[RMDB]
The record gives the reactivity of an RNA of 207 nucleotides to 2A3 and DMS. The DMS profile rests on 3,128 reads. The RNA was probed in 150 mM KOAc, 10 mM MgCl2 and 150 mM bicine (pH 8.5) at 24 C. 2A3 adducts were read by reverse transcription with SuperScript II with manganese. For DMS the reverse transcriptase was MarathonRT.
RNA sequence: GGGAACGACUCGAGUAGAGUCGAAAAGCUAUGGUGCAACUCUUUAAGGCAAUAACGAACUAAUUCUAAGCAAGUAAUGGAGAAAUGCCAGGGUCACUAUCUAGCCAUAAUAGUGCUCGACAGUAUGAGAAUCUGCUACCCUUCGGGGUAGCAGAAAGUUAACCUUGAUGUUCGCAUCAAGGUUAACAAAAGAAACAACAACAACAAC
Reactivity to 2A3 in 0.01 (KOAc 150mM, MgCl2 10mM, bicine 150mM(pH8.5), 24C), signal-to-noise 3, nucleotides 027 to 156: g010c040u040a020u100g010g030u030g020c010a030a160c000u030c030u020u100u180a110a060g020g000c070a090a120u150a190a020c070g060a050a010c060u060a100a060u150u010c040u110a130a000g040c050a080a000g020u100a060a100u110g010g060a070g030a130a030a000u060g000c010c010a020g000g020g010u040c020a000c030u020a040u080c030u040a010g010c000c020a020u070a160a050u060a110g040u080g020c000u010c030g060a050c030a050g070u060a090u140g080a060g030a050a060u000c000u000g000c000u000a000c000c000c030u020u050c130g030g000g030g000u000a000g000c000a010g010a000a000a000
Reactivity to DMS in 0.01 (KOAc 150mM, MgCl2 10mM, bicine 150mM(pH8.5), 24C), signal-to-noise 2, nucleotides 027 to 156: g020c000u000a060u000g010g030u000g020c020a070a040c070u000c020u000u000u000a110a130g010g000c030a130a130u000a050a120c080g010a090a150c060u000a070a110u010u000c030u000a080a120g050c060a030a160g000u000a050a060u020g080g000a080g020a060a090a100u000g000c000c020a150g030g000g040u000c040a010c030u000a030u000c020u000a140g040c100c080a120u010a040a030u000a080g050u000g020c020u000c040g020a050c010a060g030u000a090u000g010a200g010a050a180u000c000u000g020c000u000a030c000c000c000u000u000c300g040g000g020g020u020a000g000c010a010g000a000a000a050